[RMDB]
RNA sequence: GGGAACGACUCGAGUAGAGUCGAAAAAUACAAGGGGAGGUUUCGGCCAAAUGUUGUAUGCAGAAAGCGUGAGGAAGGUAGCACUUAGACACUCACGACUAGCGGUUCGGCAGUAGUGCUAAAAUGAGACAGUACGAAAAGUUCGCUUUUCGUACAAGAUGUUUAAGAACUUCGGUUCUUAAACAUCAAAAGAAACAACAACAACAAC
Reactivity to 2A3 in 0.01 (KOAc 150mM, MgCl2 10mM, bicine 150mM(pH8.5), 24C), signal-to-noise 6, nucleotides 027 to 156: a000u140a020c050a040a050g000g010g020g000a030g040g020u040u040u100c060g030g000c030c020a040a060a060u100g010u050u020g010u040a070u060g010c020a010g110a110a120a010g040c020g000u010g010a000g030g040a080a020g060g020u060a020g010c020a020c050u040u040a050g030a040c040a010c050u020c010a030c030g080a100c030u020a020g040c030g060g000u080u070c010g040g000c020a040g020u090a010g010u010g030c020u040a030a040a040a060u100g000a030g010a040c070a080g010u010a000c000g000a000a000a000a010g010u030u100c100g040c070u000u000u000u000c000g000u000a000c000a000a010
Reactivity to DMS in 0.01 (KOAc 150mM, MgCl2 10mM, bicine 150mM(pH8.5), 24C), signal-to-noise 3, nucleotides 027 to 156: a080u000a050c050a050a040g010g020g040g000a090g020g010u000u000u000c060g000g040c050c030a060a080a120u000g020u000u000g010u000a080u000g010c010a110g010a100a090a090g020c030g000u010g010a090g010g020a080a080g010g020u000a080g010c050a070c060u010u010a120g010a080c050a130c020u000c010a050c020g010a090c070u000a070g010c040g000g010u000u010c050g020g000c040a110g000u000a040g020u010g010c000u000a030a060a070a090u000g010a180g010a110c090a130g000u000a020c010g000a020a020a010a030g010u000u010c300g020c020u000u000u000u000c000g020u000a010c010a020a090